RNA sequence: GGGAACGACUCGAGUAGAGUCGAAAAGAUAUGGAGAUUACGUUCAACAGCUUGUCACUCGGAAACGAGUGCAAGACAUGAACGGGGAUCUCCUAAGUCAAAAGGUACUUAGUUCGCUAAGUACCAACCACUGAAUGAGGUUCGCCUCAUUCAGUGGAAAAGAAACAACAACAACAAC
Reactivity to 2A3 in 0.01 (KOAc 150mM, MgCl2 10mM, bicine 150mM(pH8.5), 24C), signal-to-noise 4, nucleotides 027 to 126: g010a010u050a000u090g020g020a010g000a000u020u020a030c010g010u000u000c150a300a140c100a280g020c000u050u120g170u300c030a000c020u000c000g010g000a010a030a030c000g010a010g000u010g010c000a000a000g010a000c080a240u300g000a010a000c010g000g030g080g010a000u010c000u000c000c000u010a010a010g010u000c010a010a000a020a260g010g000u000a010c000u010u010a020g050u050u080c240g010c240u000a000a000g010u010a000c020c000a010a000
Reactivity to DMS in 0.01 (KOAc 150mM, MgCl2 10mM, bicine 150mM(pH8.5), 24C), signal-to-noise 2, nucleotides 027 to 126: g030a030u000a190u010g000g000a040g010a000u000u000a040c010g000u000u020c000a100a110c300a230g020c010u000u000g000u020c020a000c000u000c000g000g010a040a050a060c010g040a020g000u000g010c000a010a010g000a040c110a150u010g000a010a000c000g000g020g030g000a000u000c000u000c000c000u000a020a050g000u000c000a100a130a190a140g020g020u000a000c000u000u000a000g010u010u010c250g030c000u000a010a020g020u000a000c000c000a030a050